Chemical mapping of a 177-nucleotide RNA with DMS and 2A3.
RNA sequence: GGGAACGACUCGAGUAGAGUCGAAAACAAACUUGUAUGUCCUUUCCAAGAUGCCGGUGUGCGAAGUGAGAAUGAGUGCUGCUGCGCUCUGCGAGAGCCACAUUUGCUCUAGACGCUCACAUCAAUCGAACAUUCAUCGAUUCGUCGAUGAAUGUUCAAAAGAAACAACAACAACAAC
Reactivity to DMS in 0.01 (KOAc 150mM, MgCl2 10mM, bicine 150mM(pH8.5), 24C), signal-to-noise 4, nucleotides 027 to 126: c060a090a060a120c150u020u010g000u040a080u010g000u020c070c060u000u020u000c050c070a100a070g000a060u010g000c100c050g020g020u020g000u000g010c140g000a090a030g010u000g000a140g000a120a080u010g000a040g010u000g000c090u010g010c170u030g000c070g010c010u000c030u030g000c130g010a080g000a040g020c030c120a110c110a080u010u030u000g020c000u000c000u000a050g000a210c140g000c020u040c030a030c030a090u020c060a090a080u020c110
Reactivity to 2A3 in 0.01 (KOAc 150mM, MgCl2 10mM, bicine 150mM(pH8.5), 24C), signal-to-noise 6, nucleotides 027 to 126: c020a010a080a020c060u070u080g040u110a130u110g060u070c020c000u040u060u020c020c010a040a010g020a070u090g050c050c030g060g020u070g010u020g040c060g060a120a020g040u040g050a060g040a070a100u090g000a010g030u040g010c000u030g030c040u030g000c040g000c070u010c020u020g040c130g040a190g000a000g050c020c000a060c010a070u140u100u200g000c000u000c000u010a050g020a080c040g010c030u020c000a030c010a050u090c030a030a100u120c060

DMS adducts were read by reverse transcription with MarathonRT.
Values cover nucleotides 27 to 126.
The RNA was probed in 150 mM KOAc, 10 mM MgCl2 and 150 mM bicine (pH 8.5) at 24 C.
It was measured as part of the RMDB library OK1LIB.